An RNA of 207 nucleotides, treated with DMS and 2A3 and read out base by base. It was measured as part of the RMDB library M2RFPK. DMS adducts were read by reverse transcription with MarathonRT. The 2A3 profile rests on 608 reads. The RNA was probed in 150 mM KOAc, 10 mM MgCl2 and 150 mM bicine (pH 8.5) at 24 C.

[RMDB]
RNA sequence: GGGAACGACUCGAGUAGAGUCGAAAAACGUCCUCGUCGUACAGAACGGUAACAUGUUUUCCGAACAUCCGCGCUUGGGUAUACGAGUGUACACCUUACCCAACCCUCGCCAACGGGGAGGAUGGAAUUAAGGAGAGGGCCUUCGGGCCCUCUCCAAUCAGAAAUACCAGUUCGCUGGUAUUUCUGAAAAAGAAACAACAACAACAAC
Reactivity to DMS in 0.01 (KOAc 150mM, MgCl2 10mM, bicine 150mM(pH8.5), 24C), signal-to-noise 1, nucleotides 027 to 156: a040c020g030u000c030c010u000c000g090u010c060g000u010a200c050a080g040a120a140c020g010g000u020a090a100c120a110u020g000u030u000u000u010c070c040g000a140a110c000a090u010c020c020g030c070g040c070u000u000g010g020g050u000a020u000a070c010g000a190g050u010g000u000a060c110a060c020c010u000u000a030c030c000c010a090a060c040c020c000u000c090g030c060c090a080a070c110g060g050g000g000a060g000g010a020u000g010g020a080a160u020u000a100a170g010g010a040g000a030g120g130g070c010c010u010u010c210g000g030g040c040c000c020u020c000u000c010c000a010a060
Reactivity to 2A3 in 0.01 (KOAc 150mM, MgCl2 10mM, bicine 150mM(pH8.5), 24C), signal-to-noise 1, nucleotides 027 to 156: a000c000g010u000c000c000u020c100g300u020c000g030u080a050c010a160g040a180a050c010g030g050u070a120a100c090a180u160g030u020u030u050u010c050c000g040a010a020c000a030u050c020c000g000c010g010c130u050u030g010g010g000u020a060u010a080c100g020a090g080u100g020u090a060c020a120c110c040u050u070a000c000c000c000a020a030c020c000c000u060c000g040c030c070a080a020c050g000g030g000g000a000g000g010a000u010g020g070a050a030u160u090a260a060g000g000a000g000a010g010g010g030c020c000u070u100c150g030g000g000c000c000c020u000c000u000c000c000a000a000